[RMDB]
RNA sequence: GGGAACGACUCGAGUAGAGUCGAAAAGAUAUGGACAUCCGAUUGAUUCUAUAAUCUCGUCAGUCGGAAACGACUGCGAGGUAGAAUUAGAGGAUGUCCUAAGUCAAAACCCCACUUCGGUGGGGAACAUGUACCCAUACUUCGGUAUGGGUACAUGAAAAGAAACAACAACAACAAC
Reactivity to DMS in 0.01 (KOAc 150mM, MgCl2 10mM, bicine 150mM(pH8.5), 24C), signal-to-noise 6, nucleotides 027 to 126: g010a040u010a300u010g000g000a030c010a010u000c000c000g010a300u020u010g010a020u000u000c000u000a140u010a300a130u010c000u000c000g010u010c010a010g010u010c000g020g000a070a090a180c010g010a010c000u000g000c020g000a020g000g010u000a000g000a030a010u000u000a020g000a300g010g010a010u010g010u000c000c000u000a000a060g000u020c030a110a060a150a140c000c000c000c000a000c000u000u010c190g010g010u000g010g000g010g000a010a020
Reactivity to 2A3 in 0.01 (KOAc 150mM, MgCl2 10mM, bicine 150mM(pH8.5), 24C), signal-to-noise 4, nucleotides 027 to 126: g000a020u090a060u150g000g000a000c010a000u030c020c020g100a140u070u260g010a010u020u020c010u040a210u060a300a300u140c010u030c030g300u300c120a000g000u010c000g010g000a030a090a010c020g000a000c030u000g000c000g000a000g020g000u000a010g000a000a010u060u050a050g030a140g050g000a000u000g000u000c000c000u000a000a010g010u000c000a010a020a060a130c010c000c030c000a000c010u060u120c300g170g020u000g000g000g000g000a010a020
Structure probing data (DMS and 2A3) for a 177-nucleotide construct. Reactivities are given for positions 27 through 126.